[RMDB]
RNA sequence: GGGAACGACUCGAGUAGAGUCGAAAACGUGGUCGAGAUGUGGCGGCGGUAGCCACUCGGUGUCGCCGUGGGCGUUCUUGCGGGUCGUCCAGCCACGUUCGGCUAACGGAUGAUGGCCACCGCAGCCCACAGUGGAUGGGUUCGCCCAUCCACUGUGAAAAGAAACAACAACAACAAC
Reactivity to 2A3 in 0.01 (KOAc 150mM, MgCl2 10mM, bicine 150mM(pH8.5), 24C), signal-to-noise 3, nucleotides 027 to 126: c030g010u030g030g020u050c050g050a050g030a240u110g020u040g030g000c030g020g000c000g030g000u040a080g070c000c010a080c060u070c070g040g000u040g040u040c020g000c000c030g000u080g000g000g000c020g050u090u060c040u070u160g030c140g070g000g000u030c000g010u000c030c000a020g020c010c020a010c010g000u050u030c000g000g000c020u080a170a040c050g040g010a010u080g030a050u040g040g020c010c040a070c010c040g000c020a020g030c000c000
Reactivity to DMS in 0.01 (KOAc 150mM, MgCl2 10mM, bicine 150mM(pH8.5), 24C), signal-to-noise 3, nucleotides 027 to 126: c070g010u000g000g010u000c030g010a070g010a040u010g020u000g010g030c010g010g020c000g020g010u000a090g010c000c000a080c120u000c120g000g010u000g020u010c080g020c240c010g020u000g000g010g000c010g000u010u000c070u000u010g030c110g010g000g000u000c030g020u000c010c020a190g020c020c030a020c020g000u000u000c010g010g010c030u000a040a030c030g010g000a070u000g020a120u000g010g000c000c040a070c010c010g020c030a110g000c030c010